[RMDB]
RNA sequence: GGGAACGACUCGAGUAGAGUCGAAAAGACUUUGUGUAUCCAUGCUGUUGUGUCACAACAGAAUCUGGAGCAGCAAUUGAAUCACAAUUCCUUAAACCAACGAAGAAUCACUUGGUUAUAGGCAACAAGUACUAUGACCAUUCGUGGUCAUAGUACUAAAAGAAACAACAACAACAAC
Reactivity to DMS in 0.01 (KOAc 150mM, MgCl2 10mM, bicine 150mM(pH8.5), 24C), signal-to-noise 5, nucleotides 027 to 126: g000a080c050u010u010u000g000u000g000u030a300u000c010c000a030u010g010c010u000g010u000u010g000u020g010u030c260a070c000a020a010c000a020g000a060a080u050c080u020g000g000a040g020c200a280g000c030a020a030u000u000g010a190a090u000c040a110c210a080a100u020u030c030c010u020u020a140a040a030c040c010a010a020c190g020a060a160g000a120a110u040c150a070c150u000u000g000g000u010u000a150u000a070g000g010c300a040a050c160a060
Reactivity to 2A3 in 0.01 (KOAc 150mM, MgCl2 10mM, bicine 150mM(pH8.5), 24C), signal-to-noise 9, nucleotides 027 to 126: g040a010c030u020u020u010g020u010g040u090a110u010c000c000a020u060g020c010u010g030u020u000g030u070g200u240c150a030c000a060a010c010a010g020a040a150u070c080u040g010g000a010g020c070a000g000c000a050a070u110u070g110a090a070u100c040a030c040a110a070u060u090c010c000u030u080a090a070a040c010c000a010a020c100g180a180a130g060a180a160u170c040a050c070u000u010g000g000u030u050a060u060a100g070g020c040a090a010c030a170